The record gives the reactivity of an RNA of 177 nucleotides to 2A3 and DMS. The data come from the RNA Mapping Database (RMDB), library OK2TST. Values cover nucleotides 27 to 126. For DMS the reverse transcriptase was MarathonRT. Values are in units of 0.01, from 0 to 300, in steps of 10. The DMS profile rests on 13,164 reads. For 2A3 the reverse transcriptase was SuperScript II with manganese. For 2A3, 6,480 sequencing reads were counted.
RNA sequence: GGGAACGACUCGAGUAGAGUCGAAAAAUAGGAGGUUUCAAUUCCUUUACACUCGCUCCUCAGCUAUCUCGCCACGCUCCUCCAGCUUGCGUAUAGCCUCAGCUAGCUCGUGUAACAGCUCAGCAGGUGUCUAACGUAAUUUCGAUUACGUUAGACAAAAAGAAACAACAACAACAAC
Reactivity to 2A3 in 0.01 (KOAc 150mM, MgCl2 10mM, bicine 150mM(pH8.5), 24C), signal-to-noise 4, nucleotides 027 to 126: a010u160a070g040g030a040g020g050u070u110u180c060a050a070u070u090c040c000u030u060u070a060c070a020c020u040c030g060c020u020c020c010u040c010a010g010c000u040a050u090c050u030c040g020c010c010a050c050g030c010u030c000c000u000c000c030a020g010c020u050u060g000c010g010u050a070u060a100g000c000c000u050c040a010g000c010u030a020g000c000u010c070g100u120g020u090a090a070c020a020g010c000u020c060a020g020c020a020g010g100
Reactivity to DMS in 0.01 (KOAc 150mM, MgCl2 10mM, bicine 150mM(pH8.5), 24C), signal-to-noise 8, nucleotides 027 to 126: a080u010a070g010g000a060g010g010u010u000u010c140a080a150u000u000c020c000u000u010u010a090c100a070c070u010c070g010c020u010c060c020u000c090a080g020c050u010a050u000c060u000c060g010c050c050a070c110g010c040u000c020c010u000c030c040a100g010c050u000u000g010c050g010u010a070u000a110g010c020c030u000c080a070g000c040u000a060g010c010u000c090g010u000g010u010a060a080c160a050g000c010u000c090a040g010c060a080g000g010